Chemical mapping of a 177-nucleotide RNA with 2A3 and DMS. Conditions: 150 mM KOAc, 10 mM MgCl2 and 150 mM bicine (pH 8.5), 24 C. DMS adducts were read by reverse transcription with MarathonRT.
[RMDB]
RNA sequence: GGGAACGACUCGAGUAGAGUCGAAAAGAAAGAAAGAAGAGAGCUUGUCCCCUCGUGCGAAGCACGAUUAUCAUGGGGACAAGCGACCUGCCGCCGAGUCGGCAGACGAGGGGGCAGAUCCACAGAACUCAUAUCUGAUCUUCGGAUCAGAUAUGAGAAAAGAAACAACAACAACAAC
Reactivity to 2A3 in 0.01 (KOAc 150mM, MgCl2 10mM, bicine 150mM(pH8.5), 24C), signal-to-noise 6, nucleotides 027 to 126: g080a000a050a010g060a010a090a010g130a100a040g090a020g010a000g040c000u000u010g000u000c000c000c000c000u020c000g000u000g000c090g140a170a020g020c000a000c010g010a010u100u140a140u300c160a100u240g000g000g000g000a000c000a000a000g000c010g000a000c000c000u000g000c010c040g100c050c010g000a000g030u030c010g040g240c120a020g000a000c000g000a080g000g000g010g000g000c000a000g010a020u000c010c010a070c000a080g100a070a020
Reactivity to DMS in 0.01 (KOAc 150mM, MgCl2 10mM, bicine 150mM(pH8.5), 24C), signal-to-noise 4, nucleotides 027 to 126: g000a030a100a110g000a100a070a070g000a110a160g010a110g010a220g010c010u000u000g000u000c000c000c020c010u000c000g040u000g000c010g000a110a180g010c000a000c010g010a090u040u020a060u000c200a110u060g000g010g000g000a000c000a000a000g020c000g010a010c110c000u000g000c000c000g010c010c000g050a300g000u000c010g010g040c300a020g000a010c020g000a300g000g000g020g010g000c020a000g000a040u000c030c050a050c100a110g010a090a110